[RMDB]
RNA sequence: GGGAACGACUCGAGUAGAGUCGAAAAGAUAUGGAGGAGUACGUAUGAACUACGCUAUCGGAUCGGAAACGAUCCGUAAGGCGCAUAUAAAACUCCUAAGUCAAAGGGCGGUCUUCGGACCGCCCAACUACAUAAUGCUGUUCGCAGCAUUAUGUAGAAAAGAAACAACAACAACAAC
Reactivity to 2A3 in 0.01 (KOAc 150mM, MgCl2 10mM, bicine 150mM(pH8.5), 24C), signal-to-noise 4, nucleotides 027 to 126: g050a050u210a040u240g110g060a040g010g020a040g050u040a030c110g010u010a020u030g010a120a070c090u120a050c300g000c010u020a050u210c000g020g000a000u010c000g000g000a050a050a040c000g000a000u010c000c000g000u000a020a030g030g010c000g000c020a000u010a000u000a010a080a030a010c010u020c010c010u010a060a010g040u010c040a090a070a080g000g000g000c020g000g040u030c070u100u160c300g100g010a000c000c030g000c000c000c000a010a000
Reactivity to DMS in 0.01 (KOAc 150mM, MgCl2 10mM, bicine 150mM(pH8.5), 24C), signal-to-noise 6, nucleotides 027 to 126: g010a060u010a150u000g010g010a060g000g000a050g030u000a060c300g000u000a020u000g000a120a090c160u020a300c000g010c020u000a300u000c000g010g000a020u010c000g010g000a120a070a200c000g000a000u000c010c000g010u000a020a140g000g010c000g010c010a010u000a020u000a060a090a150a050c000u000c000c010u000a070a100g010u000c070a040a090a140g000g000g020c000g000g000u000c000u000u010c210g010g000a010c000c000g010c010c000c000a000a020
Structure probing data (2A3 and DMS) for a 177-nucleotide construct. Values cover nucleotides 27 to 126. The RNA was probed in 150 mM KOAc, 10 mM MgCl2 and 150 mM bicine (pH 8.5) at 24 C. It was measured as part of the RMDB library TTRDEL.